About this RNA:
Structure probing data (DMS and 2A3) for a 177-nucleotide construct. The reactions ran in a buffer of 150 mM KOAc, 10 mM MgCl2 and 150 mM bicine (pH 8.5), at 24 C. For DMS the reverse transcriptase was MarathonRT. Source: RMDB library OK2TRN, as collected in RNAgym. Reactivities are rounded to 0.1 and cut off at 0 and 3.

[RMDB]
RNA sequence: GGGAACGACUCGAGUAGAGUCGAAAACAGGCCUGGAGCCAGGACAUGGCAGAGGACCGCAGGAGCCUCCUGCACCUGAGUUCUAGGUGUGUGAGAGUGUGCGUGUAUGCUUGUGUCUGUGGGAAAGGCUACUCAAGAUUUUCGAAUCUUGAGUAGCAAAAGAAACAACAACAACAAC
Reactivity to DMS in 0.01 (KOAc 150mM, MgCl2 10mM, bicine 150mM(pH8.5), 24C), signal-to-noise 4, nucleotides 027 to 126: c070a100g010g000c000c010u000g020g000a100g000c010c010a080g000g010a220c130a100u000g000g020c020a040g000a100g000g010a060c040c040g010c170a090g020g000a170g000c030c010u000c080c030u010g010c020a090c010c000u000g000a130g000u000u000c040u000a020g000g020u000g010u000g000u000g000a080g000a060g020u010g010u010g000c030g010u000g010u010a060u000g020c030u000u000g020u000g020u000c040u000g020u000g000g010g010a090a100a110g000
Reactivity to 2A3 in 0.01 (KOAc 150mM, MgCl2 10mM, bicine 150mM(pH8.5), 24C), signal-to-noise 4, nucleotides 027 to 126: c010a020g100g000c000c000u040g030g010a000g050c020c010a000g030g030a050c100a180u200g110g000c010a000g010a010g020g040a050c020c080g040c130a080g080g130a050g050c000c010u040c000c050u000g000c010a020c000c000u070g040a130g090u080u030c020u060a010g000g010u030g060u000g000u020g010a140g020a020g000u090g010u050g050c030g020u050g000u040a030u080g010c040u120u070g030u030g020u040c030u050g130u110g030g030g000a040a100a030g070